[RMDB]
RNA sequence: GGGAACGACUCGAGUAGAGUCGAAAAGCACGUGCACGUGUUGCUGCGAAAAAAGCGCGUGAAGUAACACGUCGUAAAUCAGCGUUAGAUGUAGCAAGUCUUCCAGGUAAAUUAGCCGAUUGCUCUAUAGACGUGGUAAAUUCGUUUACCACGUCUAAAAAGAAACAACAACAACAAC
Reactivity to DMS in 0.01 (KOAc 150mM, MgCl2 10mM, bicine 150mM(pH8.5), 24C), signal-to-noise 4, nucleotides 027 to 126: g000c020a060c100g000u010g000c060a030c020g020u000g020u000u000g000c000u010g070c030g010a010a040a090a140a090a170g000c080g000c030g020u020g070a240a010g020u020a040a050c030a010c030g020u010c090g000u020a060a060a070u030c100a040g000c050g000u000u020a070g010a060u010g020u000a090g000c010a070a050g010u010c020u000u000c010c040a110g000g000u010a040a040a120u040u030a070g010c030c030g020a120u040u020g010c040u000c040u010a170
Reactivity to 2A3 in 0.01 (KOAc 150mM, MgCl2 10mM, bicine 150mM(pH8.5), 24C), signal-to-noise 4, nucleotides 027 to 126: g060c010a010c070g030u050g010c020a010c010g010u040g020u010u010g020c010u050g000c030g130a200a040a060a020a010a030g170c080g000c010g060u100g210a090a010g020u040a020a010c010a010c020g030u060c020g010u060a030a090a030u120c050a020g040c000g070u070u090a080g000a120u080g020u080a020g010c040a050a020g040u030c030u040u030c000c030a000g020g000u060a090a190a250u170u130a060g020c000c000g010a040u050u070g020c000u010c000u020a070

The record gives the reactivity of an RNA of 177 nucleotides to DMS and 2A3.
High 2A3 reactivity points to a flexible backbone, as in loops and unpaired stretches.
Values are in units of 0.01, from 0 to 300, in steps of 10.
In probing experiments dimethyl sulfate is read out at A N1 and C N3, which are open when not base-paired.
The reactions ran in a buffer of 150 mM KOAc, 10 mM MgCl2 and 150 mM bicine (pH 8.5), at 24 C.
Reactivities are given for positions 27 through 126.